Chemical mapping of a 177-nucleotide RNA with 2A3 and DMS. For DMS, 776 sequencing reads were counted. Conditions: 150 mM KOAc, 10 mM MgCl2 and 150 mM bicine (pH 8.5), 24 C.
[RMDB]
RNA sequence: GGGAACGACUCGAGUAGAGUCGAAAAAGGGUAAACUGUCGUUCCUUAAUACUUUUGUUACUUAUGCACCGAAUUCGACUAUUUCGCAUUCAUUAGUGAUAGACGUGAAUCAACAAAUCCAAGGGGUGACAAUAUAAGGCUUCGGCCUUAUAUUGUCAAAAGAAACAACAACAACAAC
Reactivity to 2A3 in 0.01 (KOAc 150mM, MgCl2 10mM, bicine 150mM(pH8.5), 24C), signal-to-noise 1, nucleotides 027 to 126: a010g130g000g010u140a160a140a040c020u020g020u000c010g020u000u000c000c020u030u060a090a050u180a120c040u000u040u110u170g030u100u010a020c020u020u050a020u120g030c050a050c020c030g010a040a040u040u090c020g020a020c030u060a120u000u100u050c000g030c030a020u040u000c020a020u000u140a020g020u040g020a030u020a050g100a000c040g040u020g030a000a040u080c030a000a060c020a050a040a060u050c060c030a090a000g000g000g020g020u040
Reactivity to DMS in 0.01 (KOAc 150mM, MgCl2 10mM, bicine 150mM(pH8.5), 24C), signal-to-noise 1, nucleotides 027 to 126: a100g030g000g010u020a060a080a120c100u000g030u000c000g020u000u000c000c000u000u000a080a140u000a060c110u010u000u010u010g000u010u010a050c080u000u000a040u020g020c170a140c170c020g000a060a130u000u000c070g000a060c140u000a110u000u010u020c030g000c080a130u010u000c020a070u000u000a090g020u010g000a060u000a080g010a060c110g010u020g020a040a050u010c140a080a040c170a020a050a070u000c010c040a060a090g000g030g000g030u000

Record summary
For 2A3 the reverse transcriptase was SuperScript II with manganese.